Conditions: 150 mM KOAc, 10 mM MgCl2 and 150 mM bicine (pH 8.5), 24 C. Structure probing data (DMS) for a 177-nucleotide construct. It was measured as part of the RMDB library TTRINS. For DMS, 1,388 sequencing reads were counted.
RNA sequence: GGGAACGACUCGAGUAGAGUCGAAAAGAUAUGGAUAGUUACGACCGUCCCAAUACCUCCAACAGCUCCCGGGUCGGAAACGACCCGGAGACAUGGAGAUUGGGACGGUCGUAACUAUCCUAAGUCACAGAGAAGUAAAGUUCGCUUUACUUCUCUGAAAAGAAACAACAACAACAAC
Reactivity to DMS in 0.01 (KOAc 150mM, MgCl2 10mM, bicine 150mM(pH8.5), 24C), signal-to-noise 1, nucleotides 027 to 126: g000a040u010a300u010g000g000a000u000a010g000u000u000a010c000g030a050c010c010g020u000c000c020c000a000a040u000a140c300c010u010c000c010a020a140c250a210g010c090u000c110c010c010g070g020g040u000c000g000g000a080a120a230c030g000a010c000c000c000g010g000a000g010a030c140a120u000g010g010a000g000a030u000u000g010g000g000a000c030g020g020u000c000g000u000a000a020c000u000a000u000c000c000u000a030a050g010u000c020a300